[RMDB]
RNA sequence: GGGAACGACUCGAGUAGAGUCGAAAAACUAGUAUGUACAGGGGUGAGUUGACCUGUCAUCUAGACUGCUGACCAUCAACUCACCGGUCUGCUGGAUGAUGUCCACAGAGUACGACAUCAGUACUCAGUGUAUGCACUAGUUCGCUGGUGUAUACACAAAAGAAACAACAACAACAAC
Reactivity to 2A3 in 0.01 (KOAc 150mM, MgCl2 10mM, bicine 150mM(pH8.5), 24C), signal-to-noise 9, nucleotides 027 to 126: a000c010u010a010g030u050a050u240g120u110a020c030a040g300g030g010g010u020g010a010g000u010u010g030a040c030c100u050g020u000c000a010u010c010u040a090g170a300c110u100g020c020u020g010a010c020c020a020u020c000a000a010c000u000c010a010c000c000g000g000u000c000u000g000c000u000g010g020a060u080g010a030u090g090u030c010c010a060c050a080g010a010g010u020a010c050g090a040c090a180u140c050a060g010u010a010c000u000c020a000
Reactivity to DMS in 0.01 (KOAc 150mM, MgCl2 10mM, bicine 150mM(pH8.5), 24C), signal-to-noise 9, nucleotides 027 to 126: a100c010u000a020g010u020a010u040g020u060a010c010a060g010g010g000g030u000g000a010g010u000u000g000a030c150c160u010g010u000c010a020u010c030u020a120g010a160c190u010g000c110u010g000a030c030c300a300u000c020a010a010c000u000c000a010c010c010g000g010u000c010u000g000c020u000g000g010a070u010g000a060u030g000u000c010c030a120c170a080g000a020g010u000a010c020g010a130c180a120u030c110a090g000u000a010c010u000c010a150